[RMDB]
RNA sequence: GGGAACGACUCGAGUAGAGUCGAAAAUUGGCGUCGGAAGGGAUUAUCACUGAUUGGUCCACCGUUAAAGCCGCGCAUAUUGUGACCUGGUCCAUUGGGUCCCAUGUGGGGUCGUGGACCGCCAAACUGAUCGACGAUUAUUCGUAAUCGUCGAUCAAAAAGAAACAACAACAACAAC
Reactivity to 2A3 in 0.01 (KOAc 150mM, MgCl2 10mM, bicine 150mM(pH8.5), 24C), signal-to-noise 3, nucleotides 027 to 126: u030u030g060g000c030g020u060c040g030g050a070a100g140g010g040a050u110u020a130u190c090a050c300u100g060a160u140u190g000g000u000c000c020a050c000c050g030u050u190a110a120a020g050c010c010g000c020g000c010a030u030a080u190u170g090u150g040a040c010c000u040g010g030u040c000c010a050u030u260g140g000g030u080c010c000c010a100u300g210u300g040g030g010g110u000c070g000u000g000g000a030c000c000g010c020c060a130a070a050c100
Reactivity to DMS in 0.01 (KOAc 150mM, MgCl2 10mM, bicine 150mM(pH8.5), 24C), signal-to-noise 2, nucleotides 027 to 126: u000u050g020g020c000g000u000c040g010g000a110a170g010g000g000a020u040u010a040u030c090a190c260u080g000a050u000u000g010g030u000c000c000a050c020c070g000u080u020a040a050a030g000c010c030g000c000g020c020a070u020a050u010u050g000u010g010a110c060c030u010g030g010u000c040c010a040u020u040g010g020g030u010c000c020c070a130u030g080u020g020g020g000g000u000c030g010u000g040g000a000c000c000g010c220c050a040a050a170c180